[RMDB]
RNA sequence: GGGAACGACUCGAGUAGAGUCGAAAAGCCUCUAGCGUUUGCAAAACGCUGUUUGCGCAAUGAUCUGGAUUUAGCGCAAGUAGGUCCGAAAUGCAGAUCAACAUUUCGGACAACCGCGCUAAUUAAAAACGCUUUAUAGGUUCGCCUAUAAAGCGUUAAAAGAAACAACAACAACAAC
Reactivity to DMS in 0.01 (KOAc 150mM, MgCl2 10mM, bicine 150mM(pH8.5), 24C), signal-to-noise 4, nucleotides 027 to 126: g020c010c010u010c090u010a020g020c000g010u000u010u010g020c300a080a080a020a010c020g010c010u000g010u000u010u010g010c150g020c050a110a070u020g010a110u000c060u000g010g000a110u000u000u000a000g010c010g010c000a110a090g020u010a090g010g010u000c000c000g000a000a010a010u000g000c060a120g010a210u010c160a060a090c000a010u000u000u000c000g010g000a000c000a010a010c120c130g000c000g010c000u000a010a010u000u000a030a070a080
Reactivity to 2A3 in 0.01 (KOAc 150mM, MgCl2 10mM, bicine 150mM(pH8.5), 24C), signal-to-noise 2, nucleotides 027 to 126: g010c010c020u060c040u070a020g000c000g000u020u030u250g100c090a150a080a020a020c020g010c030u010g040u010u120u090g020c040g000c020a070a150u210g040a140u060c070u070g080g040a040u080u020u040a010g010c000g000c000a000a030g060u100a080g000g090u020c000c010g020a000a000a000u040g000c070a010g040a300u100c000a000a060c000a000u000u010u000c020g020g010a000c000a000a010c000c010g000c000g000c020u030a000a030u080u100a070a100a060